[RMDB]
RNA sequence: GGGAACGACUCGAGUAGAGUCGAAAAAUACAUUAUCCGGAAUAUAUUCAAUAAAUAAGUAACGUUUGCUGCCUACUUUGUCUAUGAAAUAUUUUGCAGUGCCUUUUUCUAUACCUCUUAUAUGUGCACAUAUGCUAGUAUUCGUACUAGCAUAUGUAAAAGAAACAACAACAACAAC
Reactivity to DMS in 0.01 (KOAc 150mM, MgCl2 10mM, bicine 150mM(pH8.5), 24C), signal-to-noise 5, nucleotides 027 to 126: a050u000a080c050a040u000u000a090u000c130c030g000g000a050a040u000a040u000a080u010u000c010a070a090u010a040a080a050u010a040a050g000u000a040a050c150g010u000u010u010g020c120u000g010c020c030u000a030c020u000u000u000g010u010c110u000a060u000g000a030a050a040u000a020u000u000u000u000g000c150a080g010u000g010c040c010u000u000u000u000u000c050u010a090u000a080c040c020u000c110u000u000a090u010a070u010g010u010g020c180
Reactivity to 2A3 in 0.01 (KOAc 150mM, MgCl2 10mM, bicine 150mM(pH8.5), 24C), signal-to-noise 3, nucleotides 027 to 126: a000u140a030c020a030u050u110a040u100c020c040g000g060a090a020u090a010u040a070u080u080c050a050a080u080a280a070a020u090a100a000g000u020a010a060c030g010u010u060u140g030c040u080g020c000c020u020a060c010u120u050u060g040u040c040u060a070u090g020a040a110a000u070a020u030u130u050u090g000c060a010g000u010g010c000c000u020u100u000u040u060c020u050a110u060a160c010c010u070c020u160u050a210u040a040u300g170u060g060c060